[RMDB]
RNA sequence: GGGAACGACUCGAGUAGAGUCGAAAAGAUAUGGAAGUAGCGAAGCGCAUCUAAGACUCGAUAAGCGUGAUUCGGAAACGAAUCAACGCUUUUGACGAGUCUGUGCGCUUCGCUACUUCCUAAGUCAGUACUUACCUACCUUCGGGUAGGUAAGUACAAAAGAAACAACAACAACAAC
Reactivity to DMS in 0.01 (KOAc 150mM, MgCl2 10mM, bicine 150mM(pH8.5), 24C), signal-to-noise 1, nucleotides 027 to 126: g020a040u000a300u000g000g020a010a000g000u000a010g040c000g000a030a010g000c050g020c000a010u010c300u010a180a030g040a020c010u000c000g020a130u000a010a000g010c000g010u000g000a030u000u010c000g020g000a100a130a230c000g020a030a010u000c000a020a010c010g010c010u000u000u000u000g010a170c060g000a030g020u000c000u010g000u010g010c000g010c010u000u000c000g020c010u000a000c000u000u000c000c000u000a010a070g000u010c040a170
This 177-nucleotide RNA was probed chemically with DMS. DMS adducts were read by reverse transcription with MarathonRT.